This 177-nucleotide RNA was probed chemically with DMS and 2A3. 2A3 adducts were read by reverse transcription with SuperScript II with manganese. For DMS, 1,372 sequencing reads were counted. Values cover nucleotides 27 to 126. For 2A3, 1,365 sequencing reads were counted. DMS adducts were read by reverse transcription with MarathonRT. It was measured as part of the RMDB library OK2TST.
[RMDB]
RNA sequence: GGGAACGACUCGAGUAGAGUCGAAAACAUCGAAGAGGAUUCUGAUGAGCCUUUAGAGAGAAGGCUGUCCUUAGUACCAGAUUCUGAGCAGGGAGAGGCGAUACUGCCUCGCAUCAGCGUGAUCAGCACCAUGGUGGGGUUUCGACCCCACCAUGGUAAAAGAAACAACAACAACAAC
Reactivity to DMS in 0.01 (KOAc 150mM, MgCl2 10mM, bicine 150mM(pH8.5), 24C), signal-to-noise 2, nucleotides 027 to 126: c070a050u000c080g010a070a100g020a160g020g030a110u000u000c030u000g010a070u020g000a130g010c000c010u000u000u010a060g010a170g030a180g010a050a020g010g010c000u010g010u000c030c010u000u000a040g020u000a100c070c020a130g000a160u000u000c070u000g000a070g020c040a080g000g010g020a080g010a010g010g000c010g030a120u020a070c100u000g010c010c000u000c010g010c040a040u010c050a070g020c300g000u020g000a050u000c050a080g020c130
Reactivity to 2A3 in 0.01 (KOAc 150mM, MgCl2 10mM, bicine 150mM(pH8.5), 24C), signal-to-noise 2, nucleotides 027 to 126: c020a050u120c060g080a100a040g090a020g180g000a110u040u060c010u060g080a080u050g050a010g010c010c000u000u090u120a150g080a000g020a020g050a100a000g000g000c000u000g070u050c010c000u030u050a020g060u040a100c030c050a020g040a200u160u030c020u090g040a010g050c040a030g000g000g030a080g000a000g010g030c000g040a040u120a180c050u110g000c000c000u030c010g010c010a030u040c000a000g050c000g030u040g030a050u030c020a000g050c090